Chemical mapping of a 177-nucleotide RNA with DMS and 2A3. For DMS, 1,927 sequencing reads were counted. Reactivities are given for positions 27 through 126. For DMS the reverse transcriptase was MarathonRT. 2A3 adducts were read by reverse transcription with SuperScript II with manganese.

RNA sequence: GGGAACGACUCGAGUAGAGUCGAAAACAUUCACUUCCGGUCGCCGCAAACGCACACGAUGGCUCCUUGGGUGCGGACCGUGUUCAUCAACCAGCUGCCCCGCUUCCUGGUCAUGCGACGUCCGCUAGGUAGUGAGGACGUUCGCGUCCUCACUACCAAAAGAAACAACAACAACAAC
Reactivity to DMS in 0.01 (KOAc 150mM, MgCl2 10mM, bicine 150mM(pH8.5), 24C), signal-to-noise 2, nucleotides 027 to 126: c100a120u000u000c090a130c130u010u010c080c010g000g020u000c050g010c030c050g030c080a060a090a130c120g020c040a060c040a070c090g010a070u000g020g010c030u000c020c060u010u000g020g000g010u000g040c060g000g000a060c040c070g020u020g030u000u000c060a090u010c050a070a070c050c020a080g030c100u010g020c070c000c020c060g010c080u000u030c060c010u020g030g010u000c040a120u000g000c120g000a050c090g010u010c000c000g020c090u000a060
Reactivity to 2A3 in 0.01 (KOAc 150mM, MgCl2 10mM, bicine 150mM(pH8.5), 24C), signal-to-noise 2, nucleotides 027 to 126: c030a040u150u140c040a020c060u120u060c040c010g000g030u030c030g010c050c030g060c040a100a080a030c040g000c000a010c000a010c100g080a110u110g010g020c000u010c020c060u060u060g130g000g000u080g000c000g000g040a030c020c030g020u030g060u140u110c070a140u050c000a070a050c010c010a010g000c020u080g000c010c000c040c060g050c020u080u040c000c020u030g020g000u040c040a050u130g010c030g020a030c020g010u020c010c000g000c040u070a060